[RMDB]
An RNA of 177 nucleotides, treated with DMS and 2A3 and read out base by base.
RNA sequence: GGGAACGACUCGAGUAGAGUCGAAAAACUUGUGGCUCCACCCGCGAUGGCUACGUGGAUUAUGACGAGCGUGAUUGGGCCGAAACCUAUCGCCGGGUUUCGGCGGCCAAACAAUAUCCGGUCAUCGUCUCUUCAUGUGCUUCGGCACAUGAAGAGAAAAAGAAACAACAACAACAAC
Reactivity to DMS in 0.01 (KOAc 150mM, MgCl2 10mM, bicine 150mM(pH8.5), 24C), signal-to-noise 1, nucleotides 027 to 126: a050c180u000u030g050u000g010g050c020u000c000c000a030c030c020c030g030c000g000a030u000g000g000c040u000a030c070g040u030g000g010a060u000u030a030u040g000a090c030g000a190g000c050g000u030g000a100u030u000g000g000g020c000c000g000a000a000a000c000c000u010a050u030c240g020c080c150g000g000g000u000u000u000c000g030g000c010g000g000c010c000a010a040a060c040a030a070u020a060u040c030c030g000g050u000c040a030u000c030g000
Reactivity to 2A3 in 0.01 (KOAc 150mM, MgCl2 10mM, bicine 150mM(pH8.5), 24C), signal-to-noise 3, nucleotides 027 to 126: a000c080u110u100g070u120g100g010c000u050c050c010a080c020c020c000g000c000g030a030u040g020g000c010u060a060c130g140u150g050g020a120u070u080a120u240g080a050c120g040a030g120c040g050u030g050a130u000u030g010g010g000c000c010g000a010a020a000c020c010u060a080u170c090g080c160c020g040g010g010u000u000u000c000g010g010c010g020g040c000c000a040a020a010c030a010a070u030a020u100c020c010g000g020u030c020a030u000c010g040
Source information:
Reactivities are given for positions 27 through 126.